[RMDB]
RNA sequence: GGGAACGACUCGAGUAGAGUCGAAAAAAACCAGCCUGGCUAACAUGGUGAAGCCCCAUCUCUACUAAAAACACAAAAAUUAGCCAGGUGUGGUAGCACACGCCUGUAGUCCCAGCUACUCGGGAGGGUGUCUACUGUUGUUCGCAACAGUAGACACAAAAGAAACAACAACAACAAC
Reactivity to 2A3 in 0.01 (KOAc 150mM, MgCl2 10mM, bicine 150mM(pH8.5), 24C), signal-to-noise 2, nucleotides 027 to 126: a000a010a000c000c000a000g000c000c000u000g000g000c000u000a020a000c000a120u130g120g000u050g040a100a040g020c000c020c000c010a110u060c040u020c020u080a200c050u110a060a040a050a200a000c050a020c070a090a040a030a040a080u010u010a000g020c010c000a000g000g000u010g040u000g000g000u020a010g020c030a010c020a000c080g040c000c000u020g010u020a020g020u000c000c020c000a010g010c000u020a010c010u020c040g010g000g030a080g000g100
Reactivity to DMS in 0.01 (KOAc 150mM, MgCl2 10mM, bicine 150mM(pH8.5), 24C), signal-to-noise 2, nucleotides 027 to 126: a010a030a040c000c000a200g010c010c000u000g020g010c000u000a010a000c080a020u050g010g000u010g020a070a040g010c020c000c020c030a090u040c050u000c060u030a110c180u050a030a020a060a070a060c140a040c130a060a040a030a070a150u000u000a000g000c020c000a000g000g030u000g000u000g010g020u020a060g010c130a070c070a020c020g000c030c020u010g010u010a030g020u000c010c010c000a120g000c000u000a000c010u000c060g000g000g020a130g040g000